[RMDB]
RNA sequence: GGGAACGACUCGAGUAGAGUCGAAAAAACGUUGCGAUGUACCUUCCUGACAUUUACAAGAUCACACCCGCUAACGUGACACUGCCUGCCAACAAAGACACCUAUGAUUAUAUGAAUGGAAGACUGCCAGCAGCCGGUUUGAUUGAUUCAUACGUGACAUGAAAAGUACAUUCGUGUACUUUUCAUGAAAAGAAACAACAACAACAAC
Reactivity to 2A3 in 0.01 (KOAc 150mM, MgCl2 10mM, bicine 150mM(pH8.5), 24C), signal-to-noise 5, nucleotides 027 to 156: a010a010c080g010u040u020g010c050g040a080u070g040u090a050c010c010u040u030c010c020u050g090a060c050a070u140u140u130a110c100a090a060g040a120u080c050a020c010a020c060c030c020g020c070u060a100a010c050g010u030g040a010c010a010c050u050g000c000c030u020g010c050c020a050a070c040a040a170a010g050a010c010a070c040c010u070a060u140g060a080u130u140a100u060a040u190g080a080a030u050g030g010a010a020g050a050c040u030g020c030c000a030g000c010a000g000c030c020g050g000u040u030u040g080a060u020u030g050a040u030u090c040a010u070a100c110g060u120g040a030
Reactivity to DMS in 0.01 (KOAc 150mM, MgCl2 10mM, bicine 150mM(pH8.5), 24C), signal-to-noise 3, nucleotides 027 to 156: a110a040c030g020u000u010g010c000g020a110u000g020u000a090c040c000u010u000c000c010u000g000a240c050a100u020u000u000a130c110a080a090g010a100u000c050a060c050a070c040c020c040g040c050u000a060a060c060g020u000g000a090c030a060c010u000g010c000c040u010g010c040c020a060a110c060a080a080a110g010a070c040a060c030c030u000a080u010g020a110u010u010a090u000a060u000g000a070a060u000g010g010a150a060g010a060c050u000g000c050c030a130g030c020a070g030c050c020g040g020u000u000u000g020a140u000u000g010a080u000u000c010a050u000a090c030g030u010g020a200
Chemical mapping of a 207-nucleotide RNA with 2A3 and DMS. For DMS, 6,353 sequencing reads were counted. The data come from the RNA Mapping Database (RMDB), library OK3TST. The reactions ran in a buffer of 150 mM KOAc, 10 mM MgCl2 and 150 mM bicine (pH 8.5), at 24 C.